[RMDB]
RNA sequence: GGGAACGACUCGAGUAGAGUCGAAAAUAACACUGGCGGCUGCGUAUCACUCUAGGGUACGUGAUAGUGCGAUAUAGGAAGCACUGGUACAUGCCGGCAGGGACAGUUAAGAGAUGGCCGCAGUCUCAAAAGGGGUCAUUCUUCGGAAUGACCCCAACCAUGGAAUAUGAUUCGUCAUAUUCCAUGGAAAAGAAACAACAACAACAAC
Reactivity to DMS in 0.01 (KOAc 150mM, MgCl2 10mM, bicine 150mM(pH8.5), 24C), signal-to-noise 4, nucleotides 027 to 156: u000a090a090c020a060c020u000g010g010c000g020g010c010u000g040c030g000u000a020u000c010a100c150u000c160u000a190g020g020g030u000a020c030g020u000g000a120u000a020g030u000g030c000g000a100u010a240u000a160g010g000a180a240g020c000a030c020u000g010g040u000a090c070a110u000g020c000c000g010g000c030a060g000g020g010a080c090a100g010u000u010a080a180g000a110g000a090u000g000g020c030c070g020c070a220g020u000c010u010c010a040a070a140a190g010g010g030g010u000c000a020u000u000c000u000u010c300g000g000a020a010u000g000a020c000c000c000c000a000a010
Reactivity to 2A3 in 0.01 (KOAc 150mM, MgCl2 10mM, bicine 150mM(pH8.5), 24C), signal-to-noise 4, nucleotides 027 to 156: u050a010a010c020a010c040u040g200g030c010g010g000c010u020g000c020g010u010a010u020c020a070c230u120c170u190a120g140g000g000u010a010c000g000u020g030a050u070a060g000u020g000c010g050a020u080a030u110a270g190g030a130a030g000c000a000c000u010g020g040u110a050c040a050u180g010c000c000g030g000c000a010g000g010g040a030c060a070g010u040u060a110a010g000a000g000a020u050g080g000c030c010g060c040a010g020u010c000u010c010a030a070a010a040g000g000g000g000u000c000a010u000u000c010u010u020c130g050g010a000a000u000g000a000c000c000c000c000a000a000